Structure probing data (DMS and 2A3) for a 177-nucleotide construct. It was measured as part of the RMDB library OK2TST. The RNA was probed in 150 mM KOAc, 10 mM MgCl2 and 150 mM bicine (pH 8.5) at 24 C. For DMS, 582 sequencing reads were counted.
RNA sequence: GGGAACGACUCGAGUAGAGUCGAAAAAAGGUUAUAUCGCUAACAUUCUGACGCCGAAUGUCGGUGAUGCAAACUCGCAAACGCCGGAAUAUAAAGCGUUCUUAGUCAACAUCGAGAAGGCGUAAGAGCACCCAUACCUAUUCGUAGGUAUGGGUGCAAAAGAAACAACAACAACAAC
Reactivity to DMS in 0.01 (KOAc 150mM, MgCl2 10mM, bicine 150mM(pH8.5), 24C), signal-to-noise 1, nucleotides 027 to 126: a130a090g020g010u000u000a120u000a020u000c030g020c040u000a040a040c000a080u000u000c000u000g040a000c050g000c010c120g030a030a040u000g010u000c010g020g010u000g000a050u000g010c260a100a020a050c040u000c130g000c230a130a020a010c020g020c000c010g040g030a190a160u010a140u020a220a150a100g000c000g020u000u000c070u010u000a050g000u000c150a060a110c130a030u000c150g000a110g000a080a030g000g020c000g020u020a020a110g000a120
Reactivity to 2A3 in 0.01 (KOAc 150mM, MgCl2 10mM, bicine 150mM(pH8.5), 24C), signal-to-noise 1, nucleotides 027 to 126: a000a000g240g010u220u050a250u050a050u180c040g000c060u010a030a060c030a070u000u000c030u100g040a000c020g020c030c010g080a110a060u110g030u070c020g000g000u000g030a010u030g000c040a060a060a140c040u030c120g110c080a030a040a040c030g090c040c050g100g090a180a010u260a030u000a190a050a020g000c010g020u050u010c060u070u100a050g000u000c000a050a050c000a100u010c020g020a020g000a140a030g010g000c020g020u010a010a030g060a010